[RMDB]
RNA sequence: GGGAACGACUCGAGUAGAGUCGAAAAUCAUCCCUGCACAGGCGGGAAUCCCGGCGCCCUUUCAGCGCGCAGCGCAGUACUGUGCGCUGGAUCCCCGCCUGCGCGGGGACGACGAGGGGGCGGGACACACGGCAUGGAUAUUCGUAUCCAUGCCGUGAAAAGAAACAACAACAACAAC
Reactivity to DMS in 0.01 (KOAc 150mM, MgCl2 10mM, bicine 150mM(pH8.5), 24C), signal-to-noise 1, nucleotides 027 to 126: u010c030a210u000c000c000c000u000g020c000a030c000a010g000g030c010g010g010g020a030a000u010c070c040c040g020g040c000g020c010c040c020u000u020u000c080a150g000c010g000c000g000c210a120g030c030g060c040a130g030u000a020c040u000g010u000g010c010g000c010u020g010g000a020u000c020c000c000c020g000c000c010u000g000c020g010c000g020g000g010g020a000c040g010a080c130g010a110g000g010g000g000g010c100g000g000g000a200c210a170